[RMDB]
RNA sequence: GGGAACGACUCGAGUAGAGUCGAAAAGUUCCUUGAGCGACGCUGAAAGGUAUUGCGCCAGACAACCAAAAGUUGUGCUGUUGCGCGUUGUAGGUAUUAGUUAAGCCUUUAGCUAAUAGACGGGAUACAGAACUACCUUGUUCGCAAGGUAGUUCUGAAAAGAAACAACAACAACAAC
Reactivity to DMS in 0.01 (KOAc 150mM, MgCl2 10mM, bicine 150mM(pH8.5), 24C), signal-to-noise 3, nucleotides 027 to 126: g020u000u010c000c000u000u000g020a090g010c050g000a090c090g020c030u020g020a060a070a080g010g030u010a080u000u010g020c000g020c030c020a040g010a050c010a020a010c000c030a110a080a120a300g000u000u030g000u000g010c010u020g010u000u020g010c020g020c050g020u000u010g020u000a040g000g010u010a020u000u000a030g000u000u000a040a070g010c160c110u010u010u000a040g010c010u000a000a010u010a050g010a060c090g020g010g010a160u010a170
Reactivity to 2A3 in 0.01 (KOAc 150mM, MgCl2 10mM, bicine 150mM(pH8.5), 24C), signal-to-noise 4, nucleotides 027 to 126: g020u030u000c000c000u010u080g040a010g040c030g060a050c050g020c040u060g070a080a030a000g080g020u120a110u110u250g000c010g020c000c010a000g000a000c010a000a010c000c040a100a040a030a060g010u020u000g030u060g120c000u020g020u130u240g000c000g000c000g000u020u030g020u050a090g100g030u070a080u080u070a100g080u040u100a120a060g050c030c010u040u050u020a010g010c010u020a050a070u030a030g070a040c070g050g060g000a010u100a160
Chemical mapping of a 177-nucleotide RNA with DMS and 2A3. Source: RMDB libraries RFM100 and RFMREP, as collected in RNAgym. For 2A3 the reverse transcriptase was SuperScript II with manganese. The RNA was probed in 150 mM KOAc, 10 mM MgCl2 and 150 mM bicine (pH 8.5) at 24 C. Reactivities are given for positions 27 through 126.